[RMDB]
RNA sequence: GGGAACGACUCGAGUAGAGUCGAAAAGAAAGAAAGAAAUUAGCUCGCCAGUUAGCGAGGUCUGUCCCCACACGACAGAUAAUCGGGUGCAACUCCCGCCCCUUUUCCGAGGGUCAUCGGAACCAUAAAAACUCAGGCAACUUCGGUUGCCUGAGAACAACUUCUUUAUGUUCGCAUAAAGAAGUUGAAAAGAAACAACAACAACAAC
Reactivity to DMS in 0.01 (KOAc 150mM, MgCl2 10mM, bicine 150mM(pH8.5), 24C), signal-to-noise 1, nucleotides 027 to 156: g040a180a160a030g010a020a100a160g000a110a090a200u000u000a200g000c000u000c000g100c000c000a300g050u000u000a060g010c010g010a030g050g010u000c000u010g010u000c020c050c000c290a120c050a100c260g010a080c000a020g000a020u000a070a090u000c010g000g000g010u010g000c020a190a300c010u000c000c000c000g030c010c000c000c030u000u000u080u000c010c000g010a050g000g010g010u000c080a030u000c040g000g000a090a100c270c030a070u010a070a060a080a100a130c000u000c000a020g000g050c000a000a020c000u020u000c280g050g010u040u000g030c010c000u000g000a010g010a040a060
Reactivity to 2A3 in 0.01 (KOAc 150mM, MgCl2 10mM, bicine 150mM(pH8.5), 24C), signal-to-noise 4, nucleotides 027 to 156: g050a010a050a010g060a020a120a010g080a040a140a050u170u100a110g030c010u000c000g020c010c030a130g130u150u140a010g030c010g010a000g000g000u000c000u010g000u010c020c030c030c000a040c010a000c050g010a000c000a000g010a020u020a040a060u090c000g010g000g000u010g010c000a010a000c020u010c000c000c000g030c000c000c000c010u100u120u060u010c000c000g000a000g010g000g010u080c030a000u010c000g000g020a000a010c030c010a100u210a080a100a010a010a010c000u000c000a000g010g000c000a000a010c000u030u100c200g070g000u010u000g000c000c000u000g000a000g000a000a000